[RMDB]
RNA sequence: GGGAACGACUCGAGUAGAGUCGAAAAGCGAACAUGGAGAAUGAUUUUUAGGCUCACAUGCCUGGCCAUGUUGGUCACGAUUCUGAGUCUGAACGCAGUGCUAGUUGUCAGGACAUCAGGAGGAUACCACCGGGAUAGUGUUCGCACUAUCCCGGUGAAAAGAAACAACAACAACAAC
Reactivity to 2A3 in 0.01 (KOAc 150mM, MgCl2 10mM, bicine 150mM(pH8.5), 24C), signal-to-noise 2, nucleotides 027 to 126: g050c000g010a030a020c030a080u040g010g020a120g080a090a250u210g140a250u180u080u070u120u280a030g000g010c020u070c090a200c050a090u240g000c020c010u010g000g000c000c010a030u080g000u040u030g100g000u120c100a020c080g070a090u030u010c000u020g010a020g000u010c010u020g000a060a020c030g000c050a040g050u060g190c040u090a080g070u050u200g040u060c050a040g000g060a060c010a210u020c010a020g040g010a000g040g040a040u090a130c000
Reactivity to DMS in 0.01 (KOAc 150mM, MgCl2 10mM, bicine 150mM(pH8.5), 24C), signal-to-noise 3, nucleotides 027 to 126: g000c020g000a020a020c000a020u000g010g020a060g010a140a110u050g000a110u000u000u010u000u010a010g010g010c010u000c190a110c220a050u000g010c020c020u000g010g020c010c010a040u000g000u000u000g010g020u000c120a080c110g000a140u000u010c030u000g010a030g000u000c010u000g010a140a060c160g010c050a100g010u010g020c170u000a080g010u000u000g020u000c100a150g010g000a040c040a070u000c030a020g000g010a060g000g000a110u000a040c130
Chemical mapping of a 177-nucleotide RNA with 2A3 and DMS. High DMS reactivity at an A or C suggests that its Watson-Crick edge is free. For DMS the reverse transcriptase was MarathonRT. 2A3 is a SHAPE reagent: it acylates the 2'-hydroxyl of flexible nucleotides of all four kinds. 2A3 adducts were read by reverse transcription with SuperScript II with manganese. Reactivities are rounded to 0.1 and cut off at 0 and 3. The 2A3 profile rests on 1,498 reads.